[RMDB]
RNA sequence: GGGAACGACUCGAGUAGAGUCGAAAAGAUAUGGAAUAGUUUCCAUGGAGUACGAUGGUCGGAAACGAUGUUGACGUACUAUGAAGUGGGCUAUUCCUAAGUCAAAACGCGAACUUCGGUUCGCGAACGAUCGUAAAACCUUCGGGUUUUACGAUCGAAAAGAAACAACAACAACAAC
Reactivity to 2A3 in 0.01 (KOAc 150mM, MgCl2 10mM, bicine 150mM(pH8.5), 24C), signal-to-noise 2, nucleotides 027 to 126: g010a020u040a060u110g040g000a010a010u000a010g010u120u300u160c000c000a010u020g010g090a030g000u010a020c010g050a150u210g240g000u060c040g060g050a020a060a070c010g020a010u040g160u300u190g180a130c020g000u020a000c020u040a300u190g150a120a000g010u030g000g040g010c000u000a000u050u000c000c010u000a070a020g020u030c020a030a040a090a140c020g000c000g020a020a000c000u030u040c180g080g020u000u020c000g000c010g010a000a010
Reactivity to DMS in 0.01 (KOAc 150mM, MgCl2 10mM, bicine 150mM(pH8.5), 24C), signal-to-noise 1, nucleotides 027 to 126: g020a060u000a300u000g000g020a020a020u030a000g040u000u030u000c020c000a000u000g010g020a080g000u000a010c000g000a190u000g060g000u000c050g050g000a140a080a260c000g040a040u000g000u000u000g010a250c130g020u000a000c020u000a210u000g020a060a300g020u020g000g000g000c000u010a010u000u000c000c000u040a000a130g000u000c010a110a050a110a180c010g010c010g000a020a000c000u020u020c210g060g000u000u010c000g000c000g000a000a090